[RMDB]
RNA sequence: GGGAACGACUCGAGUAGAGUCGAAAAAUAAAAUGUGCGUCCCUCCCGAACCUGCGCGCUCGGUCGAAGAGGACGACCAUCGCCGAUAGAGGACGACCGGUCUUCGGUCAAGGGAAAAAGAAAAAAACAAUUAUAAGGAGUUCGCUCCUUAUAAUUGAAAAGAAACAACAACAACAAC
Reactivity to DMS in 0.01 (KOAc 150mM, MgCl2 10mM, bicine 150mM(pH8.5), 24C), signal-to-noise 2, nucleotides 027 to 126: a110u020a070a020a100a050u000g000u000g040c100g000u000c000c000c000u010c030c000c010g000a070a100c050c010u010g020c170g020c130g040c050u010c060g000g000u000c060g030a080a080g000a120g020g020a080c030g000a050c030c000a030u000c060g050c030c040g000a060u000a090g010a050g010g000a020c100g000a100c040c080g020g020u000c060u000u000c000g030g010u000c020a060a060g000g000g000a030a060a030a080a110g010a010a020a060a080a050a060a190
Reactivity to 2A3 in 0.01 (KOAc 150mM, MgCl2 10mM, bicine 150mM(pH8.5), 24C), signal-to-noise 1, nucleotides 027 to 126: a000u210a010a040a000a060u220g060u070g100c050g020u000c000c000c000u010c000c030c020g010a060a060c000c020u220g020c030g000c000g020c070u020c100g000g110u070c030g020a070a010g100a180g110g050a020c000g000a000c000c010a070u030c030g090c030c000g020a020u070a160g150a030g030g020a030c000g030a020c010c010g070g050u110c060u210u260c050g000g020u020c000a000a040g070g020g060a090a090a010a000a010g070a040a130a010a000a040a020a020